[RMDB]
RNA sequence: GGGAACGACUCGAGUAGAGUCGAAAAUGGGGCAAGCCAGGGACACACUCAGUUUCCCUUCCCUGCUGCCCCUCCCUGGCGUGACAUUUACCUCUUCCCCCUCCUCCUCUCCCCACCCCUCCCCCUGCCCCAGCCCAUCUGCCAUAAGUCCCCAGGAUAAUACCGUAUAUUUCGAUAUACGGUAUUAAAAAGAAACAACAACAACAAC
Reactivity to DMS in 0.01 (KOAc 150mM, MgCl2 10mM, bicine 150mM(pH8.5), 24C), signal-to-noise 1, nucleotides 027 to 156: u000g030g030g050g040c020a090a080g030c120c050a030g010g000g000a070c150a120c080a090c060u000c050a140g030u000u000u000c020c020c020u010u020c010c050c000u000g010c030u000g020c000c010c010c000u010c000c010c010u000g030g010c040g000u000g010a060c070a080u000u000u000a120c040c030u010c030u000u000c020c060c030c000c020u000c000c020u000c010c030u000c020u000c010c020c000c020a170c040c020c000c010u000c010c020c010c020c010u000g000c020c010c000c030a050g010c000c020c020a070u000c030u000g010c010c020a090u000a060a170g000u010c010c020c020c020a130g010g010a200
Structure probing data (DMS) for a 207-nucleotide construct. The RNA was probed in 150 mM KOAc, 10 mM MgCl2 and 150 mM bicine (pH 8.5) at 24 C.